RNA sequence: GGGAACGACUCGAGUAGAGUCGAAAAUUUACGGGCCCGGGAGGAGGACCGAAUACAGGCGCGCGAGGUCCUCCAGGUAGUACGAACGCGCGCGUGAAUAAUAGUACUACCACCCGGGCCCACCGAAUAUGUGCCUAAAAUUCGUUUUAGGCACAUAAAAAGAAACAACAACAACAAC
Reactivity to DMS in 0.01 (KOAc 150mM, MgCl2 10mM, bicine 150mM(pH8.5), 24C), signal-to-noise 2, nucleotides 027 to 126: u000u000u010a130c110g010g020g030c000c000c000g010g010g050a260g000g000a020g030g000a010c010c030g000a200a090u010a080c220a120g050g000c000g020c000g000c010g000a160g010g020u000c000c000u000c010c010a060g030g010u000a000g010u010a000c010g010a130a110c100g000c000g010c030g010c000g020u000g010a110a120u020a060a120u000a180g010u000a000c010u000a010c000c010a300c020c020c000g000g000g000c010c000c000a010c000c020g010a090a080
Reactivity to 2A3 in 0.01 (KOAc 150mM, MgCl2 10mM, bicine 150mM(pH8.5), 24C), signal-to-noise 1, nucleotides 027 to 126: u030u030u060a080c040g000g000g010c040c000c010g010g000g020a070g020g020a000g000g000a000c000c020g070a060a070u190a030c120a090g070g070c000g010c000g000c010g030a060g030g000u020c000c000u000c010c000a000g000g000u020a000g000u000a010c000g050a160a020c060g030c000g020c000g000c020g050u050g050a050a080u200a230a030u060a060g020u010a000c000u000a020c000c000a040c000c010c000g000g010g040c010c010c000a000c000c000g000a000a000